The record gives the reactivity of an RNA of 177 nucleotides to 2A3 and DMS.
2A3 adducts were read by reverse transcription with SuperScript II with manganese.
Values cover nucleotides 27 to 126.
The DMS profile rests on 5,247 reads.
RNA sequence: GGGAACGACUCGAGUAGAGUCGAAAAGAUCGCGGUUGUGCAGGGGUGCGAUGGCUGCGUCGCAUCACACGCCCAAGCCGCGGUACGGGCCGGCGCUACAGCGCAAGAAGCCGCUGAGGCCAUCGGGCACUAAUGAGGGGUUCGCCCCUCAUUAGUGAAAAGAAACAACAACAACAAC
Reactivity to 2A3 in 0.01 (KOAc 150mM, MgCl2 10mM, bicine 150mM(pH8.5), 24C), signal-to-noise 3, nucleotides 027 to 126: g050a010u030c000g000c000g000g000u040u020g020u040g050c060a060g000g010g010g000u010g000c010g010a010u020g040g110c170u230g100c090g020u000c000g000c020a000u000c000a010c010a020c030g030c010c020c010a040a050g090c010c000g000c000g000g000u020a070c010g010g000g020c010c020g030g000c070g010c050u100a150c040a030g010c000g000c040a040a070g250a080a020g090c120c010g000c020u010g020a050g010g050c010c020a080u090c030g010g020g040
Reactivity to DMS in 0.01 (KOAc 150mM, MgCl2 10mM, bicine 150mM(pH8.5), 24C), signal-to-noise 5, nucleotides 027 to 126: g010a020u000c000g020c000g000g010u000u000g000u000g020c030a170g010g020g030g020u000g010c010g010a020u000g020g020c170u020g000c060g030u000c010g020c000a010u000c000a040c040a080c160g000c000c040c030a060a070g000c000c000g020c000g010g020u000a010c120g000g000g010c030c020g020g000c260g000c040u000a140c080a090g010c000g000c040a120a100g000a130a140g020c120c020g030c050u010g000a300g010g010c010c040a060u010c080g000g000g000